[RMDB]
RNA sequence: GGGAACGACUCGAGUAGAGUCGAAAAACAUUCAGAUGAGCUUCGCUGAAUAUCCAUUUCCACCAUGGAGAAAUGGCAAUCAGGUAAUUGAUAACGUUCAAUAGCCGUUUUUGUCCUUAUUGCCAGCCCAUGAAGCGGUGUUCGCACCGCUUCAUGGAAAAGAAACAACAACAACAAC
Reactivity to 2A3 in 0.01 (KOAc 150mM, MgCl2 10mM, bicine 150mM(pH8.5), 24C), signal-to-noise 1, nucleotides 027 to 126: a020c040a020u000u090c030a000g180a190u060g090a130g090c110u230u200c060g000c030u080g050a010a010u040a080u000c020c030a050u070u080u090c030c010a080c110c020a040u060g010g030a110g040a070a150a060u030g010g030c020a010a000u010c060a030g000g060u090a080a090u090u130g090a060u150a060a000c040g030u090u130c170a140a200u090a200g110c080c050g020u040u000u000u040u040g080u180c000c000u030u010a020u010u000g000c000c000a020g000c070